[RMDB]
Structure probing data (2A3 and DMS) for a 207-nucleotide construct. 2A3 adducts were read by reverse transcription with SuperScript II with manganese. The 2A3 profile rests on 7,078 reads. The reactions ran in a buffer of 150 mM KOAc, 10 mM MgCl2 and 150 mM bicine (pH 8.5), at 24 C. For DMS the reverse transcriptase was MarathonRT. Reactivities are given for positions 27 through 156. The DMS profile rests on 7,094 reads.
RNA sequence: GGGAACGACUCGAGUAGAGUCGAAAAAGGUGAUUUCUCCUGCACCUUUAUCAAUGGAGGAACGCGACUUUGCUGUGGGUCCCAAAGGGACCUUAGGUGCAGACAGUUACCGGCGGUGAAGUGUGAGCAUAGGUUCGUGUCUUCGGACACGAACCAACAGAACGUUAUAGUUCGCUAUAACGUUCUGAAAAGAAACAACAACAACAAC
Reactivity to 2A3 in 0.01 (KOAc 150mM, MgCl2 10mM, bicine 150mM(pH8.5), 24C), signal-to-noise 6, nucleotides 027 to 156: a000g000g010u010g000a020u010u060u020c010u020c000c000u120g050c010a010c010c010u080u240u100a080u050c060a020a070u280g020g000a010g000g020a030a030c040g020c010g120a070c020u030u030u050g010c010u020g000u080g030g000g010u010c010c000c020a130a140a100g010g000g000a010c020c000u010u070a030g000g000u020g000c010a020g090a230c040a040g020u050u100a030c000c010g040g000c010g000g010u010g030a030a010g020u050g020u070g110a030g020c070a100u100a190g000g000u000u000c000g000u000g010u000c000u020u060c210g060g000a000c000a000c000g000a000a000c000c000a000a000
Reactivity to DMS in 0.01 (KOAc 150mM, MgCl2 10mM, bicine 150mM(pH8.5), 24C), signal-to-noise 3, nucleotides 027 to 156: a060g010g020u000g010a300u000u000u000c000u000c020c010u000g010c040a080c030c020u010u000u020a070u020c150a080a140u010g010g020a050g030g000a020a100c050g010c020g000a060c020u000u000u010g020c010u000g040u010g010g020g000u000c010c000c020a080a110a160g030g020g010a030c010c010u000u010a020g040g000u010g000c050a130g000a090c170a100g020u000u000a050c030c020g030g020c110g030g000u020g020a030a100g010u000g000u000g010a130g000c120a110u010a150g000g010u000u010c000g010u000g010u000c010u000u000c300g040g000a000c000a000c000g000a000a000c000c000a010a090